Conditions: 150 mM KOAc, 10 mM MgCl2 and 150 mM bicine (pH 8.5), 24 C. Chemical mapping of a 177-nucleotide RNA with 2A3 and DMS.
[RMDB]
RNA sequence: GGGAACGACUCGAGUAGAGUCGAAAAGACGGAACGUUGUAUCAUUUCGUUGCUCAAUCAAUGACACAAACGGUCUGAGUGACACUACAGAAGAAAUGUAGUUUCCGAAAAGAAACGUCGAAAGAAAGGGAAAUCAUAUGUUCGCAUAUGAUUUCCCAAAAGAAACAACAACAACAAC
Reactivity to 2A3 in 0.01 (KOAc 150mM, MgCl2 10mM, bicine 150mM(pH8.5), 24C), signal-to-noise 4, nucleotides 027 to 126: g070a010c020g010g000a100a000c020g010u010u030g010u050a060u020c020a010u000u070u090c090g040u060u150g070c080u030c080a070a080u120c010a010a050u100g010a040c000a000c010a140a160a040c040g000g000u020c050u050g070a050g080u190g010a000c010a000c020u030a000c010a020g060a140a040g080a050a300a020u020g000u010a020g010u000u000u030c000c010g000a010a050a000a000g050a000a030a000c040g050u070c070g070a100a070a050g070a060a120a010
Reactivity to DMS in 0.01 (KOAc 150mM, MgCl2 10mM, bicine 150mM(pH8.5), 24C), signal-to-noise 3, nucleotides 027 to 126: g000a150c000g020g000a030a040c020g030u020u000g040u020a130u040c000a000u010u010u040c100g030u010u020g000c090u040c130a110a100u010c120a050a070u080g000a090c240a070c030a040a020a060c120g020g000u000c040u000g020a110g000u090g000a000c090a050c010u000a010c040a010g000a190a050g020a090a050a040u020g000u000a000g000u000u000u000c040c030g010a070a090a160a040g010a050a030a080c070g020u010c020g000a100a030a100g010a020a060a190
2A3 adducts were read by reverse transcription with SuperScript II with manganese. For 2A3, 3,017 sequencing reads were counted. As a SHAPE reagent, 2A3 marks flexible, mostly unpaired nucleotides at the ribose 2'-OH.